RNA sequence: GGGAACGACUCGAGUAGAGUCGAAAAGAUAUGGAGAACUACAGCAUUAGCCUGAUGACCUUUAUCGGAAACGAUAAAGCAAGGGCGAAGUGCUGCUCCUAAGUCAAAAGUUCGGUUCGCCGAACAAGAGAAUUAAUUUCUUCGGAAAUUAAUUCUCAAAAGAAACAACAACAACAAC
Reactivity to DMS in 0.01 (KOAc 150mM, MgCl2 10mM, bicine 150mM(pH8.5), 24C), signal-to-noise 4, nucleotides 027 to 126: g010a070u000a300u000g020g000a030g000a120a030c050u020a300c000a010g030c010a000u000u010a300g000c010c000u010g020a110u010g000a120c300c000u010u000u000a000u010c000g010g000a120a090a190c010g000a000u010a000a000a000g000c010a070a130g010g000g000c000g000a050a130g000u000g010c010u000g000c000u000c000c000u000a070a170g000u010c040a070a090a130a120g000u000u000c000g010g000u000u010c180g050c020c000g010a020a010c020a060a120
Reactivity to 2A3 in 0.01 (KOAc 150mM, MgCl2 10mM, bicine 150mM(pH8.5), 24C), signal-to-noise 4, nucleotides 027 to 126: g020a010u080a050u230g050g030a030g010a120a090c180u260a070c300a020g000c000a040u300u010a000g000c010c000u140g080a300u150g020a110c010c000u010u000u010a000u000c000g000g020a070a020a030c010g000a010u000a010a000a020g010c030a080a170g020g000g000c010g000a020a000g010u000g000c000u000g000c000u000c000c000u010a130a020g030u030c030a050a040a080a140g000u020u010c010g010g060u040u050c300g000c060c010g010a000a010c000a020a010